[RMDB]
RNA sequence: GGGAACGACUCGAGUAGAGUCGAAAACUUAACCGGCCAGAUAAGAAAAGACCGAGAGGUUCAAGCUUAUAGGGCAGAAAGCGGGGGACAGCAGUACUAAACAUUCCCUGUGGCUGAGACGAAGGUAAAAAGGGUCAUAACUUCGGUUAUGACCCAACCUAUAGUGAGGGUUCGCCCUCACUAUAGGAAAAGAAACAACAACAACAAC
Reactivity to DMS in 0.01 (KOAc 150mM, MgCl2 10mM, bicine 150mM(pH8.5), 24C), signal-to-noise 1, nucleotides 027 to 156: c060u000u010a010a110c020c020g000g020c000c050a160g090a050u010a020a070g010a050a090a230a300g000a000c070c010g020a240g000a150g050g000u000u010c050a160a250g000c010u010u000a020u010a150g030g020g090c030a110g010a070a060a110g010c030g020g000g020g020g020a080c040a050g020c060a070g000u000a240c080u010a040a070a060c030a150u000u000c030c030c000u000g020u000g030g030c010u010g000a060g030a110c080g000a150a060g000g020u000a020a030a100a100a090g010g030g000u000c000a000u010a000a010c010u000u030c270g050g040u000u000a000u000g000a010c000c000c000a000a010
Reactivity to 2A3 in 0.01 (KOAc 150mM, MgCl2 10mM, bicine 150mM(pH8.5), 24C), signal-to-noise 2, nucleotides 027 to 156: c020u080u060a060a060c010c000g020g000c000c000a030g010a150u070a070a030g060a090a080a020a010g020a010c030c030g030a020g000a060g100g050u080u090c090a060a010g000c000u000u030a020u040a070g000g020g030c020a000g140a020a060a000g070c040g000g000g000g000g030a020c040a020g060c020a030g070u080a040c060u100a110a130a000c030a070u070u060c000c000c000u030g040u060g040g020c050u020g010a000g020a050c090g020a030a010g000g030u140a060a020a020a050a000g000g000g000u000c000a010u000a000a000c000u030u030c210g050g000u000u000a000u000g000a000c000c000c000a000a000